[RMDB]
RNA sequence: GGGAACGACUCGAGUAGAGUCGAAAACCACGUCCAAGGACGGCAGCAGGCGCGAAAAUUGCCCACUCUUUGCAGGAGGCAGUUAUGAGACGUGAAGAUGAGUAUCUUGUAAAGAGGGAUAGGAGAAAACGCCUAGUAUUUUCGAAUACUAGGCGUUAAAAGAAACAACAACAACAAC
Reactivity to DMS in 0.01 (KOAc 150mM, MgCl2 10mM, bicine 150mM(pH8.5), 24C), signal-to-noise 7, nucleotides 027 to 126: c030c000a170c090g010u000c020c020a120a140g020g010a080c080g000g000c050a070g010c060a080g000g000c020g020c040g000a060a030a060a080u010u030g000c000c000c060a130c020u000c000u010u010u010g000c030a010g000g000a080g000g000c030a100g000u010u020a080u020g010a130g010a080c050g010u010g010a100a090g000a090u020g010a130g010u000a070u000c000u010u000g010u020a020a030a040g000a040g000g000g000a060u030a040g010g010a100g010a090a060
Reactivity to 2A3 in 0.01 (KOAc 150mM, MgCl2 10mM, bicine 150mM(pH8.5), 24C), signal-to-noise 6, nucleotides 027 to 126: c000c000a030c010g020u000c010c010a040a040g110g000a020c020g020g040c000a010g010c010a030g010g030c020g000c040g110a050a030a030a090u150u130g040c010c000c010a090c010u000c010u000u050u080g000c010a010g010g010a020g020g040c030a020g020u060u120a130u270g100a080g020a050c040g030u110g080a050a060g060a100u150g010a020g090u120a060u050c010u020u020g020u060a010a010a030g020a010g000g010g030a020u100a080g070g030a080g060a030a090